[RMDB]
RNA sequence: GGGAACGACUCGAGUAGAGUCGAAAACACGAAAAUCAAAACAUUUUGACCAAUGGAUCAAAUCAGACUUUCACAGUUAUAAAUUACUAUAAGGAUGCAGCAAGUACAUCAUCAGCUGGUCAAUCACCUCGGGCCUAUUUUUCGAAAUAGGCCCGAGAAAAGAAACAACAACAACAAC
Reactivity to 2A3 in 0.01 (KOAc 150mM, MgCl2 10mM, bicine 150mM(pH8.5), 24C), signal-to-noise 1, nucleotides 027 to 126: c230a000c050g050a190a150a000a150u160c020a000a000a200a100c280a210u010u000u000u000g000a000c000c000a160a000u140g000g000a000u050c090a050a050a050u040c000a140g220a000c020u280u200u030c120a240c070a000g160u010u120a120u000a200a100a000u220u000a070c120u000a000u040a280a000g160g000a000u000g070c070a070g000c070a100a000g080u160a180c000a070u210c090a120u100c000a020g000c000u120g000g060u000c000a000a000u280c040a000c000